[RMDB]
RNA sequence: GGGAACGACUCGAGUAGAGUCGAAAAAAUCUAACCAGAACUUAGCACUAGCUGCCUAAUUAGCGCAGCGAGCUCUUGCCCGCAUCGCCUAUGUGCCGGUUAAGAGCCCAUAACGAAGUAGGCUACGCUUGCGCCCCCGUCUGAGGGCGCAGGAAGAGUCUAGAUAAUUCUUCGGAAUUAUCUAGACAAAAGAAACAACAACAACAAC
Reactivity to 2A3 in 0.01 (KOAc 150mM, MgCl2 10mM, bicine 150mM(pH8.5), 24C), signal-to-noise 4, nucleotides 027 to 156: a000a000u110c070u090a060a070c050c010a070g030a130a060c100u200u170a060g040c100a060c140u050a030g000c000u010g020c000c000u240a300a300u300u230a110g010c070g010c100a000g000c000g000a000g010c010u000c000u000u020g000c010c000c010g000c000a000u020c010g010c010c000u010a020u010g000u000g000c000c020g070g010u100u190a020a000g000a010g040c000c030c010a210u220a110a080c170g120a080a010g010u010a000g000g020c010u030a030c080g010c020u000u010g000c010g000c010c000c000c010c010g080u050c090u050g010a080g000g000g000c010g000c000a000g000g000a010a010g060a010
Reactivity to DMS in 0.01 (KOAc 150mM, MgCl2 10mM, bicine 150mM(pH8.5), 24C), signal-to-noise 2, nucleotides 027 to 156: a080a050u010c030u010a140a060c040c020a120g010a110a120c050u000u000a040g040c070a140c030u000a090g020c010u010g070c010c010u000a130a210u010u020a110g040c070g040c000a280g040c010g010a070g000c010u000c040u000u000g000c010c010c090g000c000a000u000c070g010c070c040u000a090u010g010u010g000c010c090g040g010u000u000a050a010g020a060g000c000c000c010a090u020a060a110c110g000a070a120g040u000a080g000g020c010u010a060c080g010c030u000u000g010c000g000c010c000c010c000c040g040u000c220u020g010a030g000g020g030c000g000c030a000g000g000a030a110g010a160